Chemical mapping of a 207-nucleotide RNA with 2A3 and DMS.

RNA sequence: GGGAACGACUCGAGUAGAGUCGAAAAGCUCUGUAAUGCGAUGGGAUCCGAAGCCCCAUUGAGGGAUAAUACAGGCUCUCCCAUCCAACUCCUAUUCCAACACGUCCUCGUCGUACAGAGUGGUAACUAAGGUAUAGCUCCUUCGGGAGCUAUACAACGUUUACAGAUUGUUCGCAAUCUGUAAACGAAAAGAAACAACAACAACAAC
Reactivity to 2A3 in 0.01 (KOAc 150mM, MgCl2 10mM, bicine 150mM(pH8.5), 24C), signal-to-noise 4, nucleotides 027 to 156: g000c000u000c000u020g030u050a120a080u130g040c020g010a000u010g010g010g010a050u160c020c010g020a060a020g030c010c000c030c000a140u150u210g100a300g020g040g020a030u140a210a040u160a180c100a030g010g000c010u000c000u000c010c020c010a000u010c000c010a030a050c020u050c010c020u050a100u100u040c030c020a050a040c070a060c090g060u080c030c020u110c060g130u060c030g010u040a020c010a010g020a040g030u040g010g040u110a110a060c120u030a130a110g060g000u000a000u000a000g000c000u010c000c000u030u040c080g030g010g000a000g050c000u000a000u000a000c000a010a000
Reactivity to DMS in 0.01 (KOAc 150mM, MgCl2 10mM, bicine 150mM(pH8.5), 24C), signal-to-noise 2, nucleotides 027 to 156: g030c010u000c000u010g020u000a070a090u010g020c100g020a060u000g000g020g000a050u010c030c040g000a270a210g000c040c000c000c010a300u000u010g010a170g000g010g010a100u000a050a120u000a130c090a270g000g010c080u000c090u000c000c000c010a080u000c040c010a070a080c040u020c020c020u020a090u000u020c030c030a100a120c050a090c030g000u000c010c020u000c030g020u000c060g000u010a010c060a030g000a020g000u000g000g000u000a060a100c070u000a080a170g010g000u000a010u000a000g010c010u000c000c000u000u000c240g020g040g010a000g020c010u000a000u000a020c020a040a070
For 2A3, 1,990 sequencing reads were counted. For DMS, 3,341 sequencing reads were counted. High DMS reactivity at an A or C suggests that its Watson-Crick edge is free.